[RMDB]
RNA sequence: GGGAACGACUCGAGUAGAGUCGAAAACUGGUACAGGAAUAUGACAAUCUGGCCGUGGUGCUGAAUUUCGAACGUGAACGCCUGAAAGGGGCGUGUGACAGCACGGCCACCGCCUACCGGAAGGCACCCAAACUACCCAGUUCGCUGGGUAGUUUGGAAAAGAAACAACAACAACAAC
Reactivity to 2A3 in 0.01 (KOAc 150mM, MgCl2 10mM, bicine 150mM(pH8.5), 24C), signal-to-noise 1, nucleotides 027 to 126: c000u010g090g010u070a100c050a040g000g060a140a110u100a080u250g190a090c050a060a050u040c090u050g000g040c010c000g040u020g020g120u090g050c060u040g050a220a220u100u170u170c070g040a090a060c040g010u090g070a050a000c000g030c000c000u060g160a300a100a080g120g000g000g000c050g000u040g000u030g050a070c050a020g040c000a010c000g010g020c000c000a000c000c000g040c000c010u070a080c010c000g080g050a000a000g000g000c040a050c000
Reactivity to DMS in 0.01 (KOAc 150mM, MgCl2 10mM, bicine 150mM(pH8.5), 24C), signal-to-noise 1, nucleotides 027 to 126: c030u000g010g010u010a070c050a070g030g010a080a100u000a060u000g010a070c200a110a050u000c060u000g010g010c000c000g020u000g000g010u010g000c030u000g000a140a130u000u000u010c120g010a070a080c090g020u010g020a060a060c000g030c000c000u000g000a070a140a140g050g000g010g010c000g010u000g030u000g000a100c010a020g010c000a000c020g000g000c000c000a010c100c110g000c060c080u020a050c010c010g010g020a130a060g000g000c000a130c150